[RMDB]
RNA sequence: GGGAACGACUCGAGUAGAGUCGAAAAAUAUGCCGAUUACGCGAUUACGAUCGCGGCUACGUAGCUAGCCGGCCGAUUACGCGCGCGUAGCUAAUCGAUCGGCAUGCAUAUCGAUCGGCAUGCUAGCGCCGAUCAUACGAUUCGUCGUAUGAUCGGCAAAAGAAACAACAACAACAAC
Reactivity to 2A3 in 0.01 (KOAc 150mM, MgCl2 10mM, bicine 150mM(pH8.5), 24C), signal-to-noise 3, nucleotides 027 to 126: a000u180a000u030g000c010c000g000a010u030u100a040c020g000c000g040a010u030u050a080c280g100a020u010c000g000c000g020g000c000u040a030c040g090u060a010g030c010u010a020g010c010c000g000g000c030c000g020a020u030u030a070c160g020c000g000c050g080c070g150u130a010g000c000u010a000a030u030c020g020a010u000c010g000g000c010a000u020g000c000a110u100a030u140c020g040a010u000c000g000g010c010a000u020g030c010u040a060g040c030
Reactivity to DMS in 0.01 (KOAc 150mM, MgCl2 10mM, bicine 150mM(pH8.5), 24C), signal-to-noise 3, nucleotides 027 to 126: a110u020a030u020g010c020c000g010a010u000u000a060c040g020c010g010a030u000u010a130c160g020a050u000c010g030c000g000g000c220u000a100c120g020u000a060g020c020u020a300g000c000c020g050g000c040c030g000a050u000u010a010c180g030c050g010c140g020c250g000u000a070g040c030u010a040a020u000c030g000a000u000c010g010g010c030a070u000g010c060a150u000a040u000c060g000a030u000c010g010g000c010a030u000g020c110u010a050g040c280
The record gives the reactivity of an RNA of 177 nucleotides to 2A3 and DMS. It was measured as part of the RMDB library OK2TRN. The reactions ran in a buffer of 150 mM KOAc, 10 mM MgCl2 and 150 mM bicine (pH 8.5), at 24 C. For 2A3, 5,461 sequencing reads were counted.